The data come from the RNA Mapping Database (RMDB), library M2PK90. Chemical mapping of a 177-nucleotide RNA with 2A3 and DMS. For DMS, 3,837 sequencing reads were counted. Reactivities are given for positions 27 through 126. For 2A3 the reverse transcriptase was SuperScript II with manganese.
RNA sequence: GGGAACGACUCGAGUAGAGUCGAAAAUAACAUCGUAGUGUAAGACGAUAAGUCAACGUCGCUUGCCAGCAGGACCACCAAAGGAAUACGCUUCGGUAACUACUCGAGAUCCCAAGCGAUAACACAAUUCUAAAGAAUUGUUCGCAAUUCUUUAGAAAAAAGAAACAACAACAACAAC
Reactivity to 2A3 in 0.01 (KOAc 150mM, MgCl2 10mM, bicine 150mM(pH8.5), 24C), signal-to-noise 4, nucleotides 027 to 126: u050a010a020c020a050u060c030g040u040a060g040u050g030u150a110a060g060a060c020g010a060u040a200a030g100u040c060a020a050c050g030u010c010g010c050u020u070g050c020c030a020g000c000a020g020g040a030c000c020a020c010c030a080a050a030g050g030a070a090u060a080c050g000c070u010u020c010g000g020u040a120a100c010u010a000c010u010c000g000a000g000a020u000c000c000c000a000a010g040c020g110a110u150a220a010c080a010c020a110a130
Reactivity to DMS in 0.01 (KOAc 150mM, MgCl2 10mM, bicine 150mM(pH8.5), 24C), signal-to-noise 4, nucleotides 027 to 126: u000a110a100c120a050u020c050g010u000a040g000u000g030u000a090a100g030a060c010g010a080u010a080a130g010u010c080a100a100c100g010u000c030g010c050u000u000g000c020c030a060g000c040a050g010g010a090c040c040a060c050c070a040a070a080g000g010a090a060u000a090c070g000c080u000u000c030g010g000u010a080a100c010u000a010c010u010c000g000a020g000a140u000c000c010c010a060a100g020c140g000a040u000a040a060c090a060c110a050a060